[RMDB]
RNA sequence: GGGAACGACUCGAGUAGAGUCGAAAAGAACCGCGAUUCGUCGCGGUUCGAGCGCCGUAGCGCGCAACGGCGUAACGGCAGCAUUACCGCGCAGCUGCCGACGAUCGGGUGGUUUCGACCACCCGAAUAUUAUGAGACCGUUCGCGGUCUCAUAAUAAAAAGAAACAACAACAACAAC
Reactivity to DMS in 0.01 (KOAc 150mM, MgCl2 10mM, bicine 150mM(pH8.5), 24C), signal-to-noise 3, nucleotides 027 to 126: g000a010a000c000c010g030c000g030a020u000u000c140g010u010c010g030c000g010g000u000u000c000g000a060g010c010g010c000c020g010u000a050g010c080g010c040g000c070a070a030c020g000g000c000g020u000a090a180c010g010g020c010a010g010c000a090u000u010a170c060c030g000c090g020c110a170g000c000u000g000c010c010g010a070c230g000a110u010c010g010g000g020u000g000g010u000u010u010c180g010a020c010c000a010c000c000c000g000a010a000
Reactivity to 2A3 in 0.01 (KOAc 150mM, MgCl2 10mM, bicine 150mM(pH8.5), 24C), signal-to-noise 1, nucleotides 027 to 126: g000a000a010c000c000g030c010g010a000u040u050c140g010u020c000g130c000g010g000u020u000c010g010a000g000c010g000c010c010g020u040a060g050c050g020c000g000c120a020a010c000g020g000c010g030u030a130a050c000g010g000c000a000g000c010a030u020u160a100c030c000g000c020g030c070a010g000c000u010g000c020c000g000a080c060g040a100u030c010g020g000g000u010g010g030u050u130u050c210g040a040c000c000a000c010c000c000g000a000a000